[RMDB]
An RNA of 207 nucleotides, treated with 2A3 and DMS and read out base by base. Reactivities are given for positions 27 through 156. The reactions ran in a buffer of 150 mM KOAc, 10 mM MgCl2 and 150 mM bicine (pH 8.5), at 24 C. For DMS the reverse transcriptase was MarathonRT.
RNA sequence: GGGAACGACUCGAGUAGAGUCGAAAACUUGGCCUCCCAAAGUGCUGGGGCAGUUUCUUAAACAGAAGAAUGUCCAUGGUCCUUCAGCUAUGAAUCAAAGAAGGGCAGGACCAUCUUCCUCAAACUUAAUUUGAAAAGUUAGCAGCACGCUCCAGAAAUCGCUAGUUUUAUUCGUAAAACUAGCGAUAAAAGAAACAACAACAACAAC
Reactivity to 2A3 in 0.01 (KOAc 150mM, MgCl2 10mM, bicine 150mM(pH8.5), 24C), signal-to-noise 3, nucleotides 027 to 156: c040u080u110g130g040c010c000u020c000c000c000a030a090a010g090u130g020c000u000g000g010g000g000c000a030g020u020u060u060c050u050u140a110a100a040c030a030g000a000a000g020a030a050u040g000u000c000c020a110u130g110g000u040c010c000u010u040c020a020g000c030u190a110u300g150a130a070u220c100a170a090a070g020a000a010g000g000g000c010a010g000g010a000c000c010a000u000c000u010u000c000c010u060c050a020a020a040c040u080u120a040a170u220u130u140g120a100a090a040a030g020u050u060a010g030c040a000g010c020a030c090g000c000u000c000c010a000g000a030a080
Reactivity to DMS in 0.01 (KOAc 150mM, MgCl2 10mM, bicine 150mM(pH8.5), 24C), signal-to-noise 2, nucleotides 027 to 156: c150u030u000g010g020c080c080u000c000c020c000a090a070a140g020u000g010c030u000g020g040g060g060c030a140g010u000u000u000c020u010u000a150a090a170c150a080g000a030a020g030a100a290u000g040u010c040c000a100u010g030g020u000c010c010u010u020c030a170g040c130u000a150u000g030a120a180u000c070a110a140a200g010a030a050g020g070g010c030a300g010g010a030c010c040a230u010c000u010u000c030c030u000c080a070a070a100c030u010u010a110a130u000u010u010g000a120a080a040a090g020u000u000a070g010c000a130g010c030a040c010g020c020u000c030c000a080g000a120a180